[RMDB]
RNA sequence: GGGAACGACUCGAGUAGAGUCGAAAAGCCAGGGGGACGGUAGCAGCUGCACCCACGUGACGGGCAACUAUCGCAAGGGGAAUGCCCACCUUGGUAAGCCACAGCGCGCCCUGGAGUCCAAGCACAGACUUUCGAUCUGGUUCGCCAGAUCGAAAGUAAAAGAAACAACAACAACAAC
Reactivity to DMS in 0.01 (KOAc 150mM, MgCl2 10mM, bicine 150mM(pH8.5), 24C), signal-to-noise 1, nucleotides 027 to 126: g000c000c000a050g050g030g000g050g020a190c060g000g050u000a080g000c080a170g000c010u020g010c110a100c110c000c020a060c160g030u020g030a030c110g000g000g000c080a120a120c070u000a070u000c020g000c250a020a100g030g000g000g030a140a060u000g010c020c000c020a080c010c020u000u010g000g000u000a050a030g000c070c080a100c030a260g040c080g020c030g000c000c000c020u000g000g020a070g000u000c070c090a040a140g000c120a110c070a050g010

Chemical mapping of a 177-nucleotide RNA with DMS. For DMS the reverse transcriptase was MarathonRT. The RNA was probed in 150 mM KOAc, 10 mM MgCl2 and 150 mM bicine (pH 8.5) at 24 C. The data come from the RNA Mapping Database (RMDB), library OK2TRN.